[RMDB]
RNA sequence: GGGAACGACUCGAGUAGAGUCGAAAAUGCCUCUGCAGGGAACUGGAGCCUGGUGGGGAAGCACACUUUAGGUGAAGGCAGUGCAGUGUUCAUGGCGAGCAGCGAUUCGCUCGGACCCCAGAGGCCAUCUUAUAUGUCUUUUCGAAGACAUAUAAGAAAAAGAAACAACAACAACAAC
Reactivity to DMS in 0.01 (KOAc 150mM, MgCl2 10mM, bicine 150mM(pH8.5), 24C), signal-to-noise 9, nucleotides 027 to 126: u000g010c060c000u010c020u000g010c100a120g010g010g020a110a140c050u000g010g010a300g010c020c020u000g000g030u000g010g000g010g010a100a090g010c070a060c030a040c030u000u010u010a050g020g010u010g000a260a110g000g000c040a150g010u010g020c030a100g010u000g010u010u000c050a110u010g000g010c030g010a040g010c040a100g010c140g000a120u000u000c100g010c010u000c100g000g000a220c020c000c030c020a050g010a050g010g010c030c180a050
Reactivity to 2A3 in 0.01 (KOAc 150mM, MgCl2 10mM, bicine 150mM(pH8.5), 24C), signal-to-noise 3, nucleotides 027 to 126: u070g010c000c000u000c010u010g010c080a100g000g030g060a100a070c020u050g040g060a020g010c020c020u030g020g020u030g010g010g020g060a080a040g050c060a010c000a010c030u100u140u250a060g010g030u080g070a050a040g050g000c030a010g040u020g030c030a060g040u020g060u180u090c080a090u110g070g000c030g010a020g000c020a010g090c030g190a250u110u060c040g000c010u010c010g030g020a040c000c000c000c010a000g010a010g020g020c010c000a030